Conditions: 150 mM KOAc, 10 mM MgCl2 and 150 mM bicine (pH 8.5), 24 C. This 177-nucleotide RNA was probed chemically with DMS.
[RMDB]
RNA sequence: GGGAACGACUCGAGUAGAGUCGAAAAGAUAUGGAUCAUGAUAUCCUGGCUAAGGACAUGCGUGCACGGUCGGAAACGACCGCCCAACGCAACAGCCUUAGCCAGGAUAUCCGCUGAUCCUAAGUCACAAGUUAACAGUCUUCGGACUGUUAACUUGAAAAGAAACAACAACAACAAC
Reactivity to DMS in 0.01 (KOAc 150mM, MgCl2 10mM, bicine 150mM(pH8.5), 24C), signal-to-noise 2, nucleotides 027 to 126: g000a030u010a300u000g030g010a020u000c000a030u000g010a030u030a010u000c000c010u000g010g060c000u010a030a020g010g010a040c120a300u000g000c010g040u010g000c300a110c030g020g030u030c000g040g010a090a160a300c000g010a010c000c030g050c300c300c060a210a020c000g030c020a040a080c300a190g000c010c000u000u000a000g040c000c000a000g000g000a010u000a000u000c000c040g000c010u000g000a010u000c000c000u000a020a090g020u010c060a280
Reactivities are given for positions 27 through 126.